[RMDB]
RNA sequence: GGGAACGACUCGAGUAGAGUCGAAAAGACUGAUGUAGAGUUCGGUUGGAGCGACAAGGAUUUAGCUUGAGAUAGCUAAAUCACCUCGGUAUGAUUAGGGUGAGACCUAGGAACCGUAGGGGUAUUCAAUGCUGUAUUGCGUUCGCGCAAUACAGAAACGCGAAGCAAGAUUCGUCUUGCUUCGCGUAAAAGAAACAACAACAACAAC
Reactivity to 2A3 in 0.01 (KOAc 150mM, MgCl2 10mM, bicine 150mM(pH8.5), 24C), signal-to-noise 1, nucleotides 027 to 156: g030a000c050u090g020a040u110g100u100a050g050a020g040u020u120c040g010g090u010u030g020g000a030g070c030g010a050c110a070a040g100g000a000u000u000u000a000g000c000u030u010g010a030g040a090u160a030g000c000u010a000a000a000u030c010a060c000c000u010c010g040g000u180a100u130g020a030u000u030a000g020g040g010u070g090a100g020a040c000c010u000a000g000g060a000a020c000c000g010u070a010g000g000g020g010u000a100u060u300c160a130a090u140g040c010u000g000u000a000u000u000g000c000g030u020u000c100g010c000g000c120a000a000u000a000c000a000g000a050a040